[RMDB]
RNA sequence: GGGAACGACUCGAGUAGAGUCGAAAAUGGGAAGCUGUGACUGUCACAUUCCCACCUGCAGAGGACAUGGCGAAGGGUGACAGCCCCGUGUGAGGCCCUGCAGGUCGCAGUUUCAUUUAAUCCUCAGCUAGCUUCCCCUAUUCGUAGGGGAAGCUAGAAAAGAAACAACAACAACAAC
Reactivity to 2A3 in 0.01 (KOAc 150mM, MgCl2 10mM, bicine 150mM(pH8.5), 24C), signal-to-noise 1, nucleotides 027 to 126: u240g080g040g030a010a020g020c030u030g010u060g070a070c050u130g080u300c090a040c030a090u050u010c040c000c010a040c010c000u000g000c000a000g070a160g130g050a040c070a130u160g060g020c090g070a170a140g070g080g030u070g040a120c060a040g040c000c030c000c000g070u050g050u070g040a120g020g080c000c020c020u050g050c020a000g000g000u000c000g000c010a010g000u030u000u040c060a010u050u130u150a060a070u040c010c010u040c000a020g000
Reactivity to DMS in 0.01 (KOAc 150mM, MgCl2 10mM, bicine 150mM(pH8.5), 24C), signal-to-noise 2, nucleotides 027 to 126: u010g020g000g000a030a030g010c050u000g030u000g020a130c100u010g020u000c070a080c140a260u000u000c020c000c010a070c000c010u000g010c040a040g030a110g050g010a120c120a060u010g000g000c150g040a120a130g000g010g020u010g000a110c200a080g000c010c010c030c030g000u010g000u000g010a100g020g000c010c010c040u000g000c040a070g010g010u000c090g030c030a030g000u000u000u000c030a150u020u030u030a070a110u000c050c050u020c140a150g000
The record gives the reactivity of an RNA of 177 nucleotides to 2A3 and DMS. The RNA was probed in 150 mM KOAc, 10 mM MgCl2 and 150 mM bicine (pH 8.5) at 24 C. The 2A3 profile rests on 878 reads. It was measured as part of the RMDB library OK2TRN. High 2A3 reactivity points to a flexible backbone, as in loops and unpaired stretches.